[RMDB]
RNA sequence: GGGAACGACUCGAGUAGAGUCGAAAAGAUGUGUAACUUCAUUUAAAUGAAUUGAAACAAAUUUAAUACAAGUGGAUGUAGGAUAACCGUCCGUCCUUUACAUUGGUAUAAAAGUGAUCUAAAAUUCGGCAGGGACGAGUCUUCGGACUCGUCCCAAGGAAGAUAUCCGAUUCGUCGGAUAUCUUCCAAAAGAAACAACAACAACAAC
Reactivity to 2A3 in 0.01 (KOAc 150mM, MgCl2 10mM, bicine 150mM(pH8.5), 24C), signal-to-noise 1, nucleotides 027 to 156: g030a050u070g040u000g010u060a070a030c020u010u000c060a080u110u190u240a130a140a110u050g000a000a040u050u020g040a090a040a000c050a080a100a000u120u190u140a100a040u190a050c000a030a010g020u030g070g000a040u020g010u080a060g010g010a030u010a150a020c050c010g040u040c000c000g060u020c000c000u050u040u020a060c050a030u040u070g030g030u100a040u030a110a030a010a000g150u110g130a040u020c000u040a110a000a120a040u110u090c070g060g130c100a040g000g000g010a000c000g000a000g000u000c020u000u000c080g030g000a000c000u000c000g000u000c000c000c000a000a000
Structure probing data (2A3) for a 207-nucleotide construct.
The reactions ran in a buffer of 150 mM KOAc, 10 mM MgCl2 and 150 mM bicine (pH 8.5), at 24 C.
The data come from the RNA Mapping Database (RMDB), library M2RFPK.
For 2A3 the reverse transcriptase was SuperScript II with manganese.